RNA sequence: GGGAACGACUCGAGUAGAGUCGAAAAGGUGCUUCAAAAGGUGCUGUAACUGCAUUAGAGGGAGUGGCAGGCGGCGCUAGUAACGCAACAACGGCAGUAGGACUACUGUCAAACCCAUUAGGCUUAUUAGUUGGGACUACCGCAUUAGUAGCUGGAGCCUGCUACACUGUUUCGACAGUGUAGCAGGAAAAGAAACAACAACAACAAC
Reactivity to 2A3 in 0.01 (KOAc 150mM, MgCl2 10mM, bicine 150mM(pH8.5), 24C), signal-to-noise 1, nucleotides 027 to 156: g050g000u100g000c030u050u080c110a100a090a040a030g050g010u040g010c020u020g150u100a050a110c030u030g000c000a060u060u060a080g010a050g000g070g010a040g060u090g040g000c060a000g010g000c000g010g000c110g000c020u010a020g020u000a110a040c150g040c060a030a050c000a000a040c090g010g000c000a020g000u010a020g090g190a080c050u030a010c000u070g000u020c020a110a050a150c030c020c000a060u060u070a040g080g000c020u020u080a130u080u110a070g060u080u010g040g000g010a030c020u040a040c010c000g090c020a050u190u010a030g040u040a000g090c030u020g040g000a020g070